[RMDB]
RNA sequence: GGGAACGACUCGAGUAGAGUCGAAAAUCCUAAGUCGAACGACGAUCGUGGUCCGCCCAUGGUAAGACAGCCUUGUCGGAAACGACAAGGCAAUGACGCCAUGUAACAUGACCACGGGAGUUCGAUAUGGAAAAAGUGCUCCUUUCGAGGAGCACAACCAAGUCAUUAUCUUCGGAUAAUGACUUGGAAAAGAAACAACAACAACAAC
Reactivity to 2A3 in 0.01 (KOAc 150mM, MgCl2 10mM, bicine 150mM(pH8.5), 24C), signal-to-noise 5, nucleotides 027 to 156: u000c010c000u030a090a040g030u000c000g010a000a000c010g300a130c010g010a030u020c000g010u000g000g010u030c040c060g030c030c040c000a000u010g030g010u130a180a080g050a070c050a300g300c010c000u000u000g000u000c010g000g050a100a050a060c010g000a000c010a000a000g000g020c000a000a030u020g000a000c030g000c010c000a010u000g040u050a070a070c080a120u210g000a000c000c000a000c000g010g000g000a040g010u010u010c000g000a000u010a110u140g080g010a030a060a030a030a040g030u040g000c000u010c000c000u030u080u150c270g090a010g000g000a000g000c000a000c000a000a000
Reactivity to DMS in 0.01 (KOAc 150mM, MgCl2 10mM, bicine 150mM(pH8.5), 24C), signal-to-noise 1, nucleotides 027 to 156: u000c000c030u000a110a300g040u000c020g010a020a040c010g030a110c150g030a050u020c000g030u000g050g000u000c000c140g040c070c080c020a060u000g000g050u000a100a210g020a220c060a140g020c020c010u030u000g000u020c000g020g000a200a110a190c010g020a050c000a000a000g000g020c010a000a020u030g000a120c220g010c000c000a010u000g010u000a080a100c090a080u010g050a040c000c020a000c030g020g000g000a190g010u000u010c010g020a010u000a050u010g030g000a110a070a070a130a080g050u000g000c020u000c000c010u000u010u000c300g020a050g000g000a000g000c000a000c000a020a080

Overview
The record gives the reactivity of an RNA of 207 nucleotides to 2A3 and DMS. For 2A3 the reverse transcriptase was SuperScript II with manganese. The reactions ran in a buffer of 150 mM KOAc, 10 mM MgCl2 and 150 mM bicine (pH 8.5), at 24 C. For DMS, 1,667 sequencing reads were counted.